[RMDB]
RNA sequence: GGGAACGACUCGAGUAGAGUCGAAAAGACUCUUACAAAGGGAAAGUUGUAGGAGUAUUAGUCUUACUUUCCCACUAUUGGACAUUUAAGACUAGAAGUUGCUAUUGCGUCCAAUAGAUGGCAACUGGCACAGCACGCUAUUCGUAGUGUGUUGUGCAAAAGAAACAACAACAACAAC
Reactivity to DMS in 0.01 (KOAc 150mM, MgCl2 10mM, bicine 150mM(pH8.5), 24C), signal-to-noise 9, nucleotides 027 to 126: g000a040c000u000c000u000u000a000c010a010a030a160g010g010g000a060a060a080g010u000u000g010u000a010g000g000a020g010u000a060u010u000a070g010u010c090u000u010a120c110u000u000u000c010c010c020a300c080u000a030u000u000g000g000a020c020a180u010u010u000a090a110g010a100c090u000a080g010a110a050g010u000u000g000c010u000a100u000u000g010c130g010u000c010c010a020a020u000a030g000a070u000g010g000c010a010a010c010u010g010
Reactivity to 2A3 in 0.01 (KOAc 150mM, MgCl2 10mM, bicine 150mM(pH8.5), 24C), signal-to-noise 9, nucleotides 027 to 126: g010a000c000u000c000u010u010a000c000a010a020a020g090g030g030a060a060a030g020u010u000g000u010a010g000g020a010g020u030a130u090u130a020g040u010c040u060u070a090c000u020u030u000c000c000c000a000c000u010a020u010u020g000g000a000c010a030u160u180u180a200a050g060a080c030u030a040g040a140a010g060u020u010g000c010u030a040u150u190g060c040g000u000c000c000a000a010u030a020g070a010u020g040g000c000a010a010c030u020g060